The data come from the RNA Mapping Database (RMDB), library OK3TST.
Structure probing data (2A3 and DMS) for a 207-nucleotide construct.
The DMS profile rests on 4,091 reads.

RNA sequence: GGGAACGACUCGAGUAGAGUCGAAAAAGAGGUUCGAGAAUACAAAAUCCAGUAUAGUGAGCCCUCCAAACAGUUUCAAAACUUUGAAUACCUAAUUGUGGAGUUGGUAGAAGGACCGAUUUUGGUGGAUAGCUCUUGAUUUUCCAAAGGAUCAAGAAAUGAUUAGUGAGUUCGCUCACUAAUCAUUAAAAGAAACAACAACAACAAC
Reactivity to 2A3 in 0.01 (KOAc 150mM, MgCl2 10mM, bicine 150mM(pH8.5), 24C), signal-to-noise 2, nucleotides 027 to 156: a000g060a000g000g000u000u040c010g030a020g050a190a050u100a100c020a060a120a000a030u020c040c020a030g040u040a080u070a080g130u120g030a020g000c010c010c000u010c010c000a020a080a040c020a030g000u070u080u050c070a110a070a090a140c110u160u120u070g000a030a010u150a150c010c020u100a170a150u180u060g030u070g060g010a090g030u070u180g060g030u020a020g030a130a020g020g000a020c020c020g000a010u040u030u040u100g000g000u020g010g040a010u060a070g000c010u000c000u020u030g000a040u030u040u090u060c030c000a050a070a080g040g010a000u060c010a010a000g080a020
Reactivity to DMS in 0.01 (KOAc 150mM, MgCl2 10mM, bicine 150mM(pH8.5), 24C), signal-to-noise 3, nucleotides 027 to 156: a140g010a110g030g020u000u000c030g030a190g020a150a150u000a160c030a080a070a080a090u000c040c010a110g020u000a120u000a140g010u030g000a190g020c040c020c000u000c010c020a090a090a090c070a100g040u000u000u000c040a050a080a060a080c130u010u010u000g020a120a150u010a060c010c040u000a060a100u000u000g010u010g020g010a080g030u010u000g020g000u020a070g010a090a080g050g010a030c030c020g000a100u000u000u000u010g030g010u000g010g010a090u000a120g020c100u010c010u000u000g020a030u000u000u000u000c050c300a040a130a200g000g030a000u000c010a020a020g010a060